The record gives the reactivity of an RNA of 177 nucleotides to 2A3 and DMS.
RNA sequence: GGGAACGACUCGAGUAGAGUCGAAAAGCCAUUUCCUGCGGCAUUUAUGAAGGCGUGCCGGUUCUCGAUCUCGACUAUGCCGAGGAUUCGGUUGCCGAAACCGACAGCAAUUUCGUCAUGACCGGCAUAAAAUUAGCUGGUUCGCCAGCUAAUUUUAAAAAGAAACAACAACAACAAC
Reactivity to 2A3 in 0.01 (KOAc 150mM, MgCl2 10mM, bicine 150mM(pH8.5), 24C), signal-to-noise 2, nucleotides 027 to 126: g040c010c010a030u060u020u010c010c020u080g100c010g010g000c010a000u050u130u140a290u300g080a100a020g010g040c040g020u020g000c000c000g030g000u120u020c040u040c060g170a200u060c030u030c070g090a070c060u090a060u100g000c010c010g030a020g020g050a030u070u000c000g010g010u040u080g090c050c000g000a000a000a010c010c010g030a020c010a020g040c020a020a090u060u070u060c020g010u030c080a110u060g000a030c020c000g000g020c000a000
Reactivity to DMS in 0.01 (KOAc 150mM, MgCl2 10mM, bicine 150mM(pH8.5), 24C), signal-to-noise 5, nucleotides 027 to 126: g010c030c030a120u000u010u000c010c010u000g000c070g010g000c030a040u000u010u010a060u020g010a100a090g010g010c090g020u000g010c010c010g010g000u000u010c080u000c090g020a080u000c090u010c050g020a080c180u000a080u010g010c030c000g010a150g010g020a100u000u000c010g010g010u010u000g030c120c080g000a030a020a030c030c020g020a100c300a070g000c090a060a230u010u000u000c030g010u010c070a060u000g010a060c020c000g000g000c010a070
Conditions: 150 mM KOAc, 10 mM MgCl2 and 150 mM bicine (pH 8.5), 24 C.